The record gives the reactivity of an RNA of 177 nucleotides to 2A3 and DMS. The data come from the RNA Mapping Database (RMDB), library OK2TST. DMS adducts were read by reverse transcription with MarathonRT. The 2A3 profile rests on 2,340 reads. For 2A3 the reverse transcriptase was SuperScript II with manganese. The RNA was probed in 150 mM KOAc, 10 mM MgCl2 and 150 mM bicine (pH 8.5) at 24 C.
RNA sequence: GGGAACGACUCGAGUAGAGUCGAAAACACACUGGAGCAGAAACAGGAAGACGAGCAGUUGUCCCUGAUGCUCAUUGGUCUGGCGCAGCUUGCUCCAGCUGCCACACUUUGUGGGCAGGAAAGGAUAAUGCGUCCUAAUGUUCGCAUUAGGACGCAUAAAAGAAACAACAACAACAAC
Reactivity to 2A3 in 0.01 (KOAc 150mM, MgCl2 10mM, bicine 150mM(pH8.5), 24C), signal-to-noise 3, nucleotides 027 to 126: c030a000c010a010c010u000g000g000a000g000c020a010g060a060a180a030c000a040g090g050a040a040g060a050c040g000a000g050c010a050g040u160u100g050u070c030c020c000u040g070a040u060g000c010u020c010a030u030u160g030g020u020c040u040g070g020c100g000c070a020g020c030u110u120g000c000u000c010c000a000g000c000u000g000c000c000a150c010a010c120u140u130u300g040u070g050g030g000c020a010g010g090a040a060a050g120g000a060u130a240
Reactivity to DMS in 0.01 (KOAc 150mM, MgCl2 10mM, bicine 150mM(pH8.5), 24C), signal-to-noise 4, nucleotides 027 to 126: c060a100c230a300c010u000g010g000a020g010c010a010g010a130a150a100c060a080g000g000a110a080g010a030c060g000a020g020c040a050g000u000u020g000u000c020c010c020u010g000a120u000g000c000u010c010a090u000u010g010g000u010c030u010g000g040c150g010c150a050g010c060u000u000g000c010u000c010c010a030g000c010u000g000c000c010a080c010a110c190u010u010u010g030u000g010g000g030c010a010g000g020a090a070a090g010g000a150u000a110